[RMDB]
RNA sequence: GGGAACGACUCGAGUAGAGUCGAAAAAAGUGUGUCUUUAUGGGAACGGAUUUCACUAAACCUGGUGGGGUUUCGUCAGGAGACGCAAAUACCACCUUGGCAAACACUGUUCAGUCAGUUGUUUAUGCCACAGCAUAUGUCCUCUUUUUGGCUGAGGGUUUCCGGAUGUAUUCGUACAUCCGGAAACAAAAGAAACAACAACAACAAC
Reactivity to 2A3 in 0.01 (KOAc 150mM, MgCl2 10mM, bicine 150mM(pH8.5), 24C), signal-to-noise 3, nucleotides 027 to 156: a010a010g070u050g000u010g010u000c010u060u110u050a280u290g090g010g020a020a050c040g000g020a010u090u180u210c020a000c030u080a070a060a160c040c070u050g010g010u010g010g020g040g000u000u020u030c010g010u030c040a120g070g170a160g060a050c000g070c080a000a000a020u050a010c020c020a000c010c010u010u040g000g000c010a000a000a010c000a000c000u040g010u140u230c060a160g300u040c040a030g000u210u090g000u010u130u010a090u100g010c000c000a030c030a040g080c030a060u100a060u200g050u060c010c020u050c000u050u050u030u120u130g160g010c100u090g020a010g000g050